[RMDB]
RNA sequence: GGGAACGACUCGAGUAGAGUCGAAAAUAAGGAAUCCGGCAAAGUCGCCACAGCUUGCGAUGGUGUUAUCUAACACCCUGGUGCCAAAAACGUUUGCCGGUGCUGUGGCAAAGUAUAUGCCAGAAGAAGCUAUGGGUGACUUCGGUCACCCAUAGCUAAAAGAAACAACAACAACAAC
Reactivity to 2A3 in 0.01 (KOAc 150mM, MgCl2 10mM, bicine 150mM(pH8.5), 24C), signal-to-noise 1, nucleotides 027 to 126: u300a030a170g100g050a060a070u140c000c100g000g120c000a220a000a000g160u050c000g000c000c000a030c000a000g070c030u300u260g040c020g110a120u050g030g000u000g000u000u000a300u090c050u050a000a000c000a000c000c000c000u000g060g000u160g000c000c090a070a220a220a130a130c150g090u170u290u000g000c000c000g000g000u000g000c020u000g000u000g000g000c000a000a000a140g050u000a120u070a000u290g000c000c000a000g020a070a000g020a010
Structure probing data (2A3) for a 177-nucleotide construct. The RNA was probed in 150 mM KOAc, 10 mM MgCl2 and 150 mM bicine (pH 8.5) at 24 C.